[RMDB]
RNA sequence: GGGAACGACUCGAGUAGAGUCGAAAAUGAAAUCGCGAUUGGCGGCGGAUCGCUUCCAUGCGCGGCAUCCGUUGCAGCCCGAAAUGUCUCCGACGUCAGGUCCUCGGCCGUGCCACGGGCGCCGCAGACGAUCAUAAGUAUUCGUACUUAUGAUCGUAAAAGAAACAACAACAACAAC
Reactivity to 2A3 in 0.01 (KOAc 150mM, MgCl2 10mM, bicine 150mM(pH8.5), 24C), signal-to-noise 7, nucleotides 027 to 126: u100g030a000a040a060u130c060g000c020g080a090u030u080g110g010c020g010g000c020g040g000a040u030c020g000c000u050u000c030c020a090u190g070c050g000c010g070g010c000a010u010c010c010g010u010u020g000c010a010g010c010c010c010g030a050a060a040u200g040u020c050u020c130c070g110a120c040g100u120c080a040g020g100u040c010c020u020c020g020g000c040c040g170u050g000c010c010a020c010g020g010g000c010g000c000c000g000c000a010g030
Reactivity to DMS in 0.01 (KOAc 150mM, MgCl2 10mM, bicine 150mM(pH8.5), 24C), signal-to-noise 9, nucleotides 027 to 126: u010g000a070a090a070u010c120g020c020g010a060u000u000g010g020c020g010g000c020g010g000a040u000c050g010c020u010u000c020c030a090u010g010c140g010c020g010g010c040a030u000c020c020g010u010u000g010c030a090g010c300c000c020g010a020a070a080u010g010u000c030u020c080c080g010a090c120g000u000c110a080g010g010u000c060c100u000c030g000g010c060c040g010u000g000c010c060a030c030g010g010g010c080g000c000c010g020c030a110g000

Chemical mapping of a 177-nucleotide RNA with 2A3 and DMS. The DMS profile rests on 23,036 reads. The data come from the RNA Mapping Database (RMDB), library OK2TST. DMS adducts were read by reverse transcription with MarathonRT. 2A3 adducts were read by reverse transcription with SuperScript II with manganese.